Notes: An RNA of 177 nucleotides, treated with 2A3 and DMS and read out base by base. For DMS the reverse transcriptase was MarathonRT. For DMS, 1,111 sequencing reads were counted. Conditions: 150 mM KOAc, 10 mM MgCl2 and 150 mM bicine (pH 8.5), 24 C. For 2A3 the reverse transcriptase was SuperScript II with manganese. In probing experiments dimethyl sulfate is read out at A N1 and C N3, which are open when not base-paired.

RNA sequence: GGGAACGACUCGAGUAGAGUCGAAAAGAUAUGGACCAGAACUACAGCGAUGCUUGGAUUUAAGCUCGGAAACGAGCUUUGUCAGCGUUGCUGCUGGUCCUAAGUCAAAGUCGUGUUCGCACGACAAUCAAACACACCGGUUCGCCGGUGUGUUUGAAAAAGAAACAACAACAACAAC
Reactivity to 2A3 in 0.01 (KOAc 150mM, MgCl2 10mM, bicine 150mM(pH8.5), 24C), signal-to-noise 1, nucleotides 027 to 126: g060a030u080a040u070g000g000a000c010c000a010g000a100a090c230u300a050c190a030g010c010g030a040u000g040c030u170u300g300g020a080u300u300u120a020a010g000c030u010c000g010g020a050a070a060c030g010a000g030c000u010u000u000g000u000c010a000g010c000g000u000u010g010c000u000g000c020u000g000g000u000c000c000u030a070a040g030u030c070a150a000a100g000u010c000g000u020g010u000u130c230g030c150a020c010g000a000c000a010a060
Reactivity to DMS in 0.01 (KOAc 150mM, MgCl2 10mM, bicine 150mM(pH8.5), 24C), signal-to-noise 1, nucleotides 027 to 126: g000a100u000a300u000g000g010a020c000c000a020g000a050a010c080u000a300c000a010g000c000g010a000u000g020c000u000u010g010g010a000u010u010u000a010a020g000c000u000c000g000g000a050a050a150c000g030a010g010c010u000u000u010g000u000c000a010g000c000g010u000u000g010c010u000g020c010u000g000g000u010c000c010u000a010a100g000u000c040a110a010a100g000u000c000g030u000g000u000u010c180g050c000a030c000g030a010c010a050a070